Conditions: 150 mM KOAc, 10 mM MgCl2 and 150 mM bicine (pH 8.5), 24 C. The record gives the reactivity of an RNA of 177 nucleotides to 2A3 and DMS. It was measured as part of the RMDB library TTRDES. DMS adducts were read by reverse transcription with MarathonRT.

[RMDB]
RNA sequence: GGGAACGACUCGAGUAGAGUCGAAAAGAUAUGGAACUUAUGUUCGCAACAGCUUUAUCGGAAACGAUAAAGACAUGCGGUCAGCAUACUGGUUCCUAAGUCAAACUUUUACGUUCGCGUAAAAGAACUGAACGCUAUAGUUCGCUAUAGCGUUCAGAAAAGAAACAACAACAACAAC
Reactivity to 2A3 in 0.01 (KOAc 150mM, MgCl2 10mM, bicine 150mM(pH8.5), 24C), signal-to-noise 2, nucleotides 027 to 126: g000a000u100a040u170g030g000a010a000c020u090u020a030u050g060u090u150c020g000c040a070a170c050a240g020c000u000u000u020a000u010c000g000g000a070a060a060c030g000a010u000a010a000a010g040a050c010a100u080g000c030g040g100u180c150a020g050c030a030u030a100c130u150g150g000u000u000c000c020u000a090a010g040u050c040a050a090a230c000u050u000u010u030a010c010g000u000u070c300g010c000g130u010a000a020a020a070g010a080a130
Reactivity to DMS in 0.01 (KOAc 150mM, MgCl2 10mM, bicine 150mM(pH8.5), 24C), signal-to-noise 3, nucleotides 027 to 126: g030a070u010a300u010g000g000a030a000c000u000u000a010u000g010u000u000c070g070c020a060a110c190a230g000c010u000u000u000a000u000c000g010g000a170a110a200c000g010a010u000a000a010a020g010a060c130a110u000g000c140g000g010u010c300a080g010c000a020u010a030c300u000g020g000u000u000c000c000u000a030a180g000u000c030a130a130a200c060u000u000u000u000a000c010g030u000u010c290g020c000g000u000a000a010a010a000g000a100a300